Chemical mapping of a 177-nucleotide RNA with DMS and 2A3. The reactions ran in a buffer of 150 mM KOAc, 10 mM MgCl2 and 150 mM bicine (pH 8.5), at 24 C. For 2A3, 806 sequencing reads were counted. For 2A3 the reverse transcriptase was SuperScript II with manganese.

[RMDB]
RNA sequence: GGGAACGACUCGAGUAGAGUCGAAAAAGUGAAGAACAAAACCUUUUUAAAACCACAAUUAAGUGUGGUUGGGCUAGAGAAGAAAAGGUGGGAUGUCCAACAAGGAAAAGACAGCUCUUUUUCAAGAGAGCAGUUUAUAGUUCGCUAUAAACUGCUCAAAAGAAACAACAACAACAAC
Reactivity to DMS in 0.01 (KOAc 150mM, MgCl2 10mM, bicine 150mM(pH8.5), 24C), signal-to-noise 2, nucleotides 027 to 126: a080g030u010g020a090a100g000a110a090c050a070a060a160a060c020c000u000u000u000u020u000a080a150a060a020c000c000a010c000a040a160u000u000a130a110g020u000g030u000g000g010u000u010g000g020g010c110u000a110g010a130g020a070a150g000a050a040a060a070g000g010u000g000g010g010a100u000g010u000c030c040a040a050c100a050a180g000g000a040a020a020a070g010a060c140a070g010c130u000c000u000u000u000u010u000c040a060a130g030a280
Reactivity to 2A3 in 0.01 (KOAc 150mM, MgCl2 10mM, bicine 150mM(pH8.5), 24C), signal-to-noise 1, nucleotides 027 to 126: a020g030u050g050a080a110g030a060a010c040a040a070a000a010c020c000u160u000u000u040u060a140a150a000a000c000c000a020c000a000a090u260u180a300a140g120u020g020u020g010g000u000u060g010g030g020c000u150a090g000a050g010a300a020g000a000a010a000a070g010g010u080g020g000g030a040u040g000u080c000c000a040a000c030a140a080g040g000a050a000a030a030g030a010c050a070g020c000u060c030u110u010u060u000u020c060a020a000g040a000